Structure probing data (2A3) for a 207-nucleotide construct. Values cover nucleotides 27 to 156. The RNA was probed in 150 mM KOAc, 10 mM MgCl2 and 150 mM bicine (pH 8.5) at 24 C.
RNA sequence: GGGAACGACUCGAGUAGAGUCGAAAAUCGCAACAGCUUGGGCUCUCAGGAACCAAUGGUGCAUAUCUCUUCCCAGUUCAGGCAUCAUGGUGGCAGCCUGAAAUUGGCUAUGGUGAGAGCAGUUACACUGCAGAAACUGGCAAAUGCUACAAAGCAGCCUCUAAGUGAUUUUCGAAUCACUUAGAGGAAAAGAAACAACAACAACAAC
Reactivity to 2A3 in 0.01 (KOAc 150mM, MgCl2 10mM, bicine 150mM(pH8.5), 24C), signal-to-noise 4, nucleotides 027 to 156: u100c060g040c060a040a070c000a070g040c040u060u100g030g030g000c000u010c010u000c010a040g040g070a050a030c010c000a060a150u030g010g010u030g000c020a050u050a160u170c060u020c010u070u020c030c000c010a000g020u030u060c050a000g000g130c010a040u000c000a010u050g030g000u030g030g000c020a000g040c000c020u050g040a060a060a020u120u100g030g020c030u070a070u130g030g020u030g010a030g010a000g000c000a000g000u010u020a050c100a000c060u040g000c020a030g120a110a110a030c030u060g030g000c020a090a080a100u140g000c020u050a110c050a040a140a000g050c000a020g020
Reactivities are rounded to 0.1 and cut off at 0 and 3.